[RMDB]
RNA sequence: GGGAACGACUCGAGUAGAGUCGAAAAGAUAUGGACUGAGCGAUAAGUUGUAUUCGGAAACGAAUAUACAACUUUUGACGCUUUGUCCUAAGUCAAAGGAUAUUGCUUCUUCGGAAGCAAUAUCCAACAGUAGGACACUCUUCGGAGUGUCCUACUGAAAAGAAACAACAACAACAAC
Reactivity to DMS in 0.01 (KOAc 150mM, MgCl2 10mM, bicine 150mM(pH8.5), 24C), signal-to-noise 1, nucleotides 027 to 126: g020a030u000a300u000g000g000a010c000u010g000a000g000c010g000a100u000a030a010g000u000u020g020u000a020u000u010c000g010g000a110a060a190c000g010a020a020u010a120u010a050c050a000a000c000u000u000u000u010g020a160c090g000c000u000u000u000g000u000c000c000u010a020a100g000u000c040a100a120a150g010g000a000u000a000u000u000g000c000u000u000c000u000u000c190g000g000a030a020g000c000a000a000u000a000u000c000c000a030a050
Reactivity to 2A3 in 0.01 (KOAc 150mM, MgCl2 10mM, bicine 150mM(pH8.5), 24C), signal-to-noise 1, nucleotides 027 to 126: g020a030u080a040u070g000g000a000c030u020g020a010g010c020g050a100u010a200a020g020u000u000g020u000a030u000u020c000g010g000a040a010a010c000g000a030a000u220a040u000a090c020a030a010c000u050u060u150u100g100a100c010g020c030u020u010u000g040u000c000c000u000a110a000g050u040c050a130a000a200g020g000a000u000a010u000u010g000c000u030u000c000u050u120c300g060g000a000a000g000c000a000a000u000a000u050c000c000a000a000

Conditions: 150 mM KOAc, 10 mM MgCl2 and 150 mM bicine (pH 8.5), 24 C.
An RNA of 177 nucleotides, treated with DMS and 2A3 and read out base by base.
The 2A3 profile rests on 2,115 reads.
It was measured as part of the RMDB library TTRDEL.
Values cover nucleotides 27 to 126.
Reactivities are rounded to 0.1 and cut off at 0 and 3.